Source information:
Structure probing data (2A3 and DMS) for a 207-nucleotide construct. For DMS the reverse transcriptase was MarathonRT. The 2A3 profile rests on 1,099 reads. 2A3 adducts were read by reverse transcription with SuperScript II with manganese.

[RMDB]
RNA sequence: GGGAACGACUCGAGUAGAGUCGAAAAGUCUCGCCGUUCGCGGCGAGACAAAAAACCUUUGUGUUACGGAUAUAUGGGAGAAGUCCCAUUGGGAAACUUCAUCGAUCAUAUAUUUUCGUAACACUCUGGUAAAAACUUAUUCCUUCGGGAAUAAGAACAAAGAUAGUCAGUUCGCUGACUAUCUUUGAAAAGAAACAACAACAACAAC
Reactivity to 2A3 in 0.01 (KOAc 150mM, MgCl2 10mM, bicine 150mM(pH8.5), 24C), signal-to-noise 1, nucleotides 027 to 156: g000u000c000u050c000g000c000c030g030u080u090c300g000c000g040g040c010g020a020g030a000c010a000a020a000a020a000a000c000c000u000u010u020g000u000g000u010u000a000c000g020g010a020u010a030u030a050u010g000g000g020a050g000a010a030g050u100c050c000c040a210u070u160g010g010g010a020a220a160c000u030u000c040a210u300c040g110a050u070c010a000u030a000u000a010u050u080u080u160c000g000u000a000a000c000a000c000u000c000u000g000g000u050a000a010a040a070a040c000u000u000a000u000u030c000c000u000u060c230g060g000g000a000a000u000a000a000g000a030a020
Reactivity to DMS in 0.01 (KOAc 150mM, MgCl2 10mM, bicine 150mM(pH8.5), 24C), signal-to-noise 1, nucleotides 027 to 156: g030u010c000u030c000g060c040c000g100u000u000c290g030c080g070g020c000g020a000g050a010c010a000a030a050a100a120a010c020c020u000u010u000g020u010g010u000u010a000c010g030g010a030u000a020u000a030u000g000g000g000a120g010a040a040g010u020c000c000c020a250u010u000g020g030g000a240a070a080c000u000u010c010a280u000c110g030a140u020c000a010u000a010u000a000u010u010u000u030c010g030u000a020a030c000a010c010u000c020u000g010g040u000a060a050a050a230a100c000u010u000a010u000u000c000c000u000u000c300g060g020g000a010a010u020a000a000g000a130a200